[RMDB]
RNA sequence: GGGAACGACUCGAGUAGAGUCGAAAAGAGCUCACCAACUCCAGAAUCUCCAAUCACAAUACGGUCCCAGGAUAUAUCAUACUCCGACACAAGAAAUCAAAACUAUCAGCAUCAUCAGGACCCAUCAUAGAGUAUGCGUAUAAGUGUAGUUGGUGGACCCUUCGCUUGUAUUCGUACAAGCGAAGGGAAAAGAAACAACAACAACAAC
Reactivity to 2A3 in 0.01 (KOAc 150mM, MgCl2 10mM, bicine 150mM(pH8.5), 24C), signal-to-noise 1, nucleotides 027 to 156: g000a070g030c060u010c140a110c000c020a000a030c000u000c000c000a070g030a050a050u030c000u000c040c000a000a090u080c010a050c040a060a200u250a270c140g010g060u050c000c000c000a000g020g010a000u080a060u020a000u080c020a000u000a000c000u000c000c010g040a050c010a000c000a070a010g040a080a050a000u020c080a000a080a000a040c060u080a040u160c100a040g010c010a000u010c000a010u070c030a040g010g010a070c000c000c000a000u080c020a010u070a020g070a020g050u100a060u040g000c020g030u110a040u090a250a070g060u010g010u040a040g040u110u030g050g030u020g040g000a040
Structure probing data (2A3) for a 207-nucleotide construct. Values cover nucleotides 27 to 156. It was measured as part of the RMDB library OK3TST.